[RMDB]
RNA sequence: GGGAACGACUCGAGUAGAGUCGAAAACAACAGUUGGCCGAUGGGCUGGGCAAGGGGGUCUGGAGCAAUCCUGACCUCCCGGCUGCAAGGAUAACUACAUGGGCUGGCUCCGAUCCGGGUACCUUGGGUCGGGGCGAGAAAAUAGGGUACUGGCGUCGACGAUAUAAUCGUUCGCGAUUAUAUCGUCAAAAGAAACAACAACAACAAC
Reactivity to 2A3 in 0.01 (KOAc 150mM, MgCl2 10mM, bicine 150mM(pH8.5), 24C), signal-to-noise 2, nucleotides 027 to 156: c020a000a010c000a030g040u040u050g060g020c000c000g120a060u020g000g020g000c030u000g020g070g030c050a070a090g020g010g000g010g000u000c000u020g010g010a020g020c010a010a100u010c000c000u000g000a000c000c000u020c000c000c010g020g000c010u050g000c030a030a080g080g020a090u100a290a080c080u150a030c090a030u060g080g000g000c000u020g030g000c010u000c000c000g000a010u000c000c010g030g010g040u020a030c010c000u020u030g000g020g000u000c000g020g000g000g000c000g000a020g000a000a140a010a020u080a010g030g000g000u010a010c000u050g090g080c090g060u130c080